[RMDB]
RNA sequence: GGGAACGACUCGAGUAGAGUCGAAAAACAGAGUGGGAAUAGAAAGCUAACAUAAUAAGAAUAGGAAUAUCAAUAAAUCAACGUUUUUCAACUUAUGAAAUGCUUGAUUUUCAUUAAAAAUGAUAUAUAGAGAACUUAGUUUCGACUAAGUUCUCUAAAAAGAAACAACAACAACAAC
Reactivity to 2A3 in 0.01 (KOAc 150mM, MgCl2 10mM, bicine 150mM(pH8.5), 24C), signal-to-noise 3, nucleotides 027 to 126: a010c060a020g070a040g040u030g000g050g050a000a020u100a100g200a070a110a000g010c040u050a090a030c010a060u270a150a060u110a180a000g110a030a080u090a110g070g030a060a000u020a000u100c040a040a060u020a160a040a010u020c020a020a030c070g010u020u000u020u020u020c050a060a100c080u120u060a050u220g020a020a010a020u060g000c000u000u000g000a000u030u000u040u040c010a040u030u190a100a130a030a050a020u040g000a000u010a000u010a040
Reactivity to DMS in 0.01 (KOAc 150mM, MgCl2 10mM, bicine 150mM(pH8.5), 24C), signal-to-noise 2, nucleotides 027 to 126: a140c100a050g010a060g010u000g020g000g000a070a060u010a060g010a130a030a020g000c030u000a120a100c070a050u030a060a060u030a040a140g000a050a090u060a110g000g010a090a030u040a090u010c030a090a110u040a050a020a050u020c040a010a020c180g000u000u010u020u010u010c020a040a200c300u030u030a030u000g010a000a110a010u010g020c000u000u010g000a030u000u000u020u000c020a010u000u020a020a060a040a070a140u030g000a040u020a000u030a210